[RMDB]
RNA sequence: GGGAACGACUCGAGUAGAGUCGAAAAAUGCCUUUGGAGAAAGAUGGAUUCUGUGAAAAAGGCUGAAAGGGGAGCGUCGCCGAAGCAAAUAAAACCCCAUCGGUAUUAUUUGCUGGCCGUGCAUUGAGAAGAUUCUCGUUUUCGAACGAGAAUCUUCAAAAGAAACAACAACAACAAC
Reactivity to DMS in 0.01 (KOAc 150mM, MgCl2 10mM, bicine 150mM(pH8.5), 24C), signal-to-noise 2, nucleotides 027 to 126: a070u010g010c010c010u010u010u000g010g010a080g000a020a030a050g000a030u020g010g030a300u000u000c010u030g010u060g020a060a040a000a010a000g010g010c000u000g000a040a090a090g000g000g010g010a140g010c060g010u020c160g010c010c060g020a120a050g010c000a000a000a020u000a000a010a100a010c000c010c110c120a040u030c090g010g000u000a050u010u000a000u000u000u010g000c000u000g030g020c060c070g010u030g030c090a150u020u000g010a300
Reactivity to 2A3 in 0.01 (KOAc 150mM, MgCl2 10mM, bicine 150mM(pH8.5), 24C), signal-to-noise 2, nucleotides 027 to 126: a000u070g000c000c000u000u000u000g030g000a000g000a000a160a000g060a060u040g000g070a140u030u030c010u010g300u000g140a020a000a000a000a000g030g000c000u010g030a020a050a000g010g030g000g000a090g000c010g090u120c080g020c000c000g090a050a010g000c000a000a000a000u010a000a010a020a000c040c040c000c000a090u030c000g000g000u050a110u070u010a000u000u000u000g020c040u040g000g010c000c030g020u100g010c060a120u040u150g010a080
Notes
An RNA of 177 nucleotides, treated with DMS and 2A3 and read out base by base. For DMS, 3,557 sequencing reads were counted. DMS adducts were read by reverse transcription with MarathonRT.